[RMDB]
RNA sequence: GGGAACGACUCGAGUAGAGUCGAAAAGGGGUCUGCUCUCGAGAAGUUGUUUAGCUUGGAUUUAUGGACUGAAGCCUCCACGGUCCAUUGUCAGCUAAACAAACUUCUAAGACAGGAGCAGACGGAGGCACCCAAAAGCUUUUCUUCGGAAAAGCAAGACAAUACAACACUUCGGUGUUGUAUUGUCAAAAGAAACAACAACAACAAC
Reactivity to 2A3 in 0.01 (KOAc 150mM, MgCl2 10mM, bicine 150mM(pH8.5), 24C), signal-to-noise 3, nucleotides 027 to 156: g090g010g030g040u000c000u000g010c000u000c010u020c000g020a010g000a010a010g020u010u010g000u010u000u000a010g010c070u100u290g090g000a090u210u280u210a010u060g000g000a000c010u010g030a090a000g020c010c010u000c000c010a020c010g000g010u010c000c000a000u000u000g020u020c070a050g000c000u010a000a010a020c030a030a000a000c000u000u010c000u020a060a000g000a000c000a010g000g010a000g000c000a000g000a000c000g000g000a000g010g010c010a050c000c010c010a040a150a030a020g000c000u050u010u010u010c010u030u120c240g120g000a000a010a000a000g000c010a020a000
Reactivity to DMS in 0.01 (KOAc 150mM, MgCl2 10mM, bicine 150mM(pH8.5), 24C), signal-to-noise 1, nucleotides 027 to 156: g000g000g010g060u030c000u000g000c010u010c030u000c020g000a020g040a010a010g080u000u010g030u000u010u000a040g010c030u000u010g010g010a090u000u020u020a000u000g000g010a140c010u000g000a080a060g030c020c000u000c000c010a300c070g010g000u000c000c000a010u000u000g020u010c030a050g000c000u000a010a010a020c000a020a040a020c000u000u000c010u000a100a190g040a090c300a070g000g000a070g020c030a040g010a010c030g020g000a010g050g030c000a150c030c060c010a010a070a190a200g010c020u000u000u000u000c010u010u010c290g040g000a040a040a020a020g000c000a070a100
This 207-nucleotide RNA was probed chemically with 2A3 and DMS. For 2A3, 3,050 sequencing reads were counted. Values are in units of 0.01, from 0 to 300, in steps of 10. Conditions: 150 mM KOAc, 10 mM MgCl2 and 150 mM bicine (pH 8.5), 24 C. The DMS profile rests on 1,851 reads.